[RMDB]
RNA sequence: GGGAACGACUCGAGUAGAGUCGAAAAAGGAACUUCCAGCGAAUCUAAGAUGGCGUCCUCGAACAAUUCCGGACCCAGUUCGUCGAGAAGUCGCCUGAGUGGGUCUGCGUCAUCAAACUCCGAUCGAGGUAGGCGCCGGAUUCGUCCGGCGCCUACCAAAAGAAACAACAACAACAAC
Reactivity to 2A3 in 0.01 (KOAc 150mM, MgCl2 10mM, bicine 150mM(pH8.5), 24C), signal-to-noise 1, nucleotides 027 to 126: a000g030g000a000a050c000u180u000c040c040a000g000c000g110a000a000u000c040u040a010a190g080a100u120g030g000c070g040u220c100c100u100c050g140a180a130c200a060a230u300u000c030c000g000g000a000c000c000c000a120g010u000u000c000g000u000c000g000a000g000a300a040g250u030c000g080c080c000u060g000a010g210u000g060g030g000u010c000u120g000c080g110u000c000a010u000c000a000a000a000c040u100c030c060g080a080u180c070g000a030